[RMDB]
The record gives the reactivity of an RNA of 207 nucleotides to 2A3 and DMS.
For DMS, 10,122 sequencing reads were counted.
The RNA was probed in 150 mM KOAc, 10 mM MgCl2 and 150 mM bicine (pH 8.5) at 24 C.
For 2A3, 6,789 sequencing reads were counted.
Values cover nucleotides 27 to 156.
Source: RMDB library M2RFOK, as collected in RNAgym.
For DMS the reverse transcriptase was MarathonRT.

RNA sequence: GGGAACGACUCGAGUAGAGUCGAAAAGCGGGGCUUGAAACGCGGGUAGCGCGCACGCCCGGCGAAGAAGUUCGCAUACGCCGUGUGCUGGUGCCGAAGUGUCUGCUGCAACGGCACGCUCGACACCUAGAACAUACCGUAUUCGUACGGUAUGUAACUACCAUCAUUCUUUCGAGAAUGAUGGUAGAAAAGAAACAACAACAACAAC
Reactivity to 2A3 in 0.01 (KOAc 150mM, MgCl2 10mM, bicine 150mM(pH8.5), 24C), signal-to-noise 6, nucleotides 027 to 156: g040c050g010g010g040g000c020u070u110g050a100a120a030c050g000c040g030g010g090u130a080g110c030g000c000g000c020a010c020g010c000c020c000g020g000c000g010a030a020g060a050a020g110u070u100c050g010c040a020u040a140c070g060c110c040g050u040g020u030g030c060u060g010g000u010g000c010c000g010a090a020g020u020g010u080c070u100g070c050u110g030c080a080a020c030g010g000c020a000c010g020c070u000c000g020a020c000a010c020c000u040a060g040a100a000c000a000u000a000c000c000g000u000a010u020u110c200g040u040a010c000g010g000u010a000u000g000u010a010a010
Reactivity to DMS in 0.01 (KOAc 150mM, MgCl2 10mM, bicine 150mM(pH8.5), 24C), signal-to-noise 3, nucleotides 027 to 156: g010c020g010g010g030g020c030u000u000g000a100a120a050c020g030c010g020g010g020u000a120g010c040g060c030g020c060a110c110g010c010c020c040g050g010c010g020a070a220g000a100a150g010u000u000c010g010c040a140u000a090c060g010c110c060g020u000g000u000g010c010u010g000g040u010g020c020c000g030a050a090g030u010g010u000c030u000g000c060u000g020c170a200a140c080g000g020c010a030c000g010c070u000c010g000a040c010a020c000c010u000a130g010a110a070c000a010u000a000c000c000g020u000a050u000u000c300g020u000a040c010g010g000u000a000u010g000u000a020a110